Annotation
The record gives the reactivity of an RNA of 177 nucleotides to 2A3 and DMS. Values cover nucleotides 27 to 126. The RNA was probed in 150 mM KOAc, 10 mM MgCl2 and 150 mM bicine (pH 8.5) at 24 C.

[RMDB]
RNA sequence: GGGAACGACUCGAGUAGAGUCGAAAAUCUCCUGCCGAUCCCCUCGAUGAGCUCCGGCCGCGACGCCACCGCCUGGGCCAGUAGCAGCAAUGUGACGAAGCCGCCCAGGGUGAACAGCAGUGAGAACUCGAUAUCGAGUAUUCGUACUCGAUAUCGAAAAAGAAACAACAACAACAAC
Reactivity to 2A3 in 0.01 (KOAc 150mM, MgCl2 10mM, bicine 150mM(pH8.5), 24C), signal-to-noise 7, nucleotides 027 to 126: u010c010u010c000c010u000g010c010c010g060a100u040c010c010c020c010u020c040g150a180u110g040a030g030c030u040c040c020g040g000c030c010g040c020g020a030c020g020c030c010a040c020c020g060c000c010u020g010g000g010c000c010a040g020u080a020g010c020a000g010c030a080a170u130g050u080g060a080c050g080a080a040g030c040c030g000c010c020c000a000g020g000g010u060g040a030a030c020a020g040c000a020g030u030g170a050g010a050a080c020
Reactivity to DMS in 0.01 (KOAc 150mM, MgCl2 10mM, bicine 150mM(pH8.5), 24C), signal-to-noise 4, nucleotides 027 to 126: u000c020u020c010c000u010g010c050c020g010a070u020c040c010c000c060u020c120g010a090u010g000a120g000c030u020c060c100g000g010c020c010g020c030g000a080c150g010c060c020a080c050c010g030c050c000u000g020g010g010c020c040a080g000u000a160g020c000a080g000c170a110a090u010g010u000g000a070c050g030a120a140g010c130c210g020c010c010c000a030g010g000g000u030g010a090a060c140a120g000c050a030g020u030g010a060g020a060a090c120